[RMDB]
RNA sequence: GGGAACGACUCGAGUAGAGUCGAAAAUGAACUAUAGAAAAAUUUGGAUAGAUGCUAACGGACCUAUACCUAAAGAUUCUGAUGGAAGAACAUAAGAAAAGAACAUCAGCAAAAACAUUAGAAAUGGUUAAGAACGGGACCCAUCCUGCACAAAAAGGACUACCCAUAACUUCGGUUAUGGGUAGUCAAAAGAAACAACAACAACAAC
Reactivity to 2A3 in 0.01 (KOAc 150mM, MgCl2 10mM, bicine 150mM(pH8.5), 24C), signal-to-noise 1, nucleotides 027 to 156: u090g030a000a010c000u030a050u120a180g160a070a120a010a020a010u110u200u150g000g000a030u030a090g060a000u020g090c000u010a070a050c040g060g030a030c050c000u040a020u050a090c040c020u040a000a000a040g030a050u020u020c000u000g020a110u000g010g030a020a010g000a070a030c010a130u290a090a070g090a070a050a000a000g040a010a000c000a040u000c000a000g010c100a000a040a060a000a000c020a100u000u100a010g020a050a070a070u120g010g030u060u080a030a000g000a050a030c020g000g010g000a030c030c000c000a000u040c000c000u000g020c070a040c030a040a140a160a000a000g160
The record gives the reactivity of an RNA of 207 nucleotides to 2A3.
Source: RMDB library ARCHII, as collected in RNAgym.
2A3 adducts were read by reverse transcription with SuperScript II with manganese.
The RNA was probed in 150 mM KOAc, 10 mM MgCl2 and 150 mM bicine (pH 8.5) at 24 C.